[RMDB]
RNA sequence: GGGAACGACUCGAGUAGAGUCGAAAAUGAUAUACCUUCGCCUCUUUAGAGUAAGGACGAUCUUCAGAGUUGAGUCUUUGAUCUUAAUUUUUUUUAAGACUAAUUCAAAGUACUCGUAGUAUAGAACCACAUUUUAAAGGUUCGCCUUUAAAAUGUGAAAAGAAACAACAACAACAAC
Reactivity to DMS in 0.01 (KOAc 150mM, MgCl2 10mM, bicine 150mM(pH8.5), 24C), signal-to-noise 2, nucleotides 027 to 126: u010g000a160u010a130u000a050c100c080u000u000c040g020c090c000u010c010u000u000u010a140g000a100g010u010a040a050g010g000a120c040g000a040u000c020u010u000c090a090g010a140g010u000u010g000a020g000u000c000u000u000u000g000a020u010c020u000u000a010a010u000u000u000u000u020u000u000u000a000a010g000a180c100u010a080a120u000u000c010a000a020a020g000u000a010c010u000c000g010u000a090g000u000a040u010a070g000a090a130c100
Reactivity to 2A3 in 0.01 (KOAc 150mM, MgCl2 10mM, bicine 150mM(pH8.5), 24C), signal-to-noise 1, nucleotides 027 to 126: u050g020a000u030a000u040a190c000c000u030u080c050g000c010c010u030c030u040u110u060a060g010a040g060u070a120a070g060g080a060c050g000a030u070c000u110u030c050a060g030a040g120u150u070g020a000g000u000c000u000u000u050g000a020u000c000u000u040a060a080u020u040u040u030u130u060u050u020a000a010g000a010c010u010a040a060u050u030c010a010a000a030g020u050a090c020u000c040g030u040a040g010u040a070u010a070g030a050a010c030